[RMDB]
RNA sequence: GGGAACGACUCGAGUAGAGUCGAAAAGGCUUACCAAACGUUGGUAAAUCAACAUUAUUUAAUGCAAUUACAAAGGCGGGUGCCUUGGCAGCAAACUAUCCGUUCGCAACUAUAGACCCAAAUGUGGCUUUAGCCCGGAUUUCGAUCCGGGCUAAAGAAAAGAAACAACAACAACAAC
Reactivity to DMS in 0.01 (KOAc 150mM, MgCl2 10mM, bicine 150mM(pH8.5), 24C), signal-to-noise 3, nucleotides 027 to 126: g000g000c070u010u090a120c040c000a090a090a080c190g030u020u000g000g020u000a030a050a050u020c100a070a130c030a040u000u010a140u030u030u030a030a060u050g010c070a100a150u020u000a050c120a100a070a190g000g020c000g020g010g000u000g000c000c020u060u000g000g030c080a110g020c090a050a050a040c130u020a030u000c090c020g010u020u020c020g000c030a060a030c080u000a070u000a110g000a170c000c000c020a080a120a060u010g040u010g000g010
Reactivity to 2A3 in 0.01 (KOAc 150mM, MgCl2 10mM, bicine 150mM(pH8.5), 24C), signal-to-noise 3, nucleotides 027 to 126: g020g000c030u050u100a040c040c020a190a040a000c080g160u020u020g000g020u050a070a090a100u140c040a000a110c030a030u020u220a100u100u300u160a080a080u060g020c010a020a100u080u000a040c070a080a060a020g010g000c000g030g030g130u140g000c000c000u010u010g020g080c060a130g040c000a000a010a110c020u030a090u050c000c080g040u070u020c030g000c040a000a030c000u050a010u050a200g090a140c010c000c010a000a050a160u240g080u250g110g000
Chemical mapping of a 177-nucleotide RNA with DMS and 2A3. Reactivities are given for positions 27 through 126. It was measured as part of the RMDB library OK1LIB. The RNA was probed in 150 mM KOAc, 10 mM MgCl2 and 150 mM bicine (pH 8.5) at 24 C. For 2A3 the reverse transcriptase was SuperScript II with manganese. The 2A3 profile rests on 990 reads. For DMS, 2,580 sequencing reads were counted.